Source: RMDB library M2PK50, as collected in RNAgym.
The record gives the reactivity of an RNA of 177 nucleotides to DMS and 2A3.
Values are in units of 0.01, from 0 to 300, in steps of 10.
Values cover nucleotides 27 to 126.
Conditions: 150 mM KOAc, 10 mM MgCl2 and 150 mM bicine (pH 8.5), 24 C.
RNA sequence: GGGAACGACUCGAGUAGAGUCGAAAAUAAUGCCACUUCGGUGGCAUUAGCAGGUACGAAAGCCCUAUCAAGUACAAAAUCCCAAUCAACAAGAUAGGCAAAUAAUGCAUAGCUUCGGCUAUGCAAAUCAGUAAGUCACGUUCGCGUGACUUACUGAAAAAGAAACAACAACAACAAC
Reactivity to DMS in 0.01 (KOAc 150mM, MgCl2 10mM, bicine 150mM(pH8.5), 24C), signal-to-noise 1, nucleotides 027 to 126: u000a000a010u000g010c010c000a040c000u000u020c210g010g000u000g000g000c000a000u000u000a000g020c260a090g010g000u000a010c060g010a080a050a200g030c180c030c000u010a000u000c000a080a180g000u040a010c010a090a030a070a070u010c010c010c010a010a050u020c110a060a030c150a180a090g000a010u000a020g000g010c060a190a090a150u000a080a080u000g000c000a000u000a000g000c010u000u000c120g020g010c000u010a030u030g010c000a000a010a020
Reactivity to 2A3 in 0.01 (KOAc 150mM, MgCl2 10mM, bicine 150mM(pH8.5), 24C), signal-to-noise 1, nucleotides 027 to 126: u030a020a010u000g000c000c000a010c000u050u030c210g080g000u010g080g010c000a000u000u000a000g000c030a060g150g100u030a000c030g090a150a010a000g030c010c000c030u010a010u000c030a100a020g080u040a040c010a010a110a020a080u000c030c000c000a000a090u120c040a010a060c010a020a020g000a000u020a010g000g000c000a000a020a040u240a000a070u040g000c000a000u000a010g020c000u070u070c300g070g000c000u000a000u000g010c010a000a000a000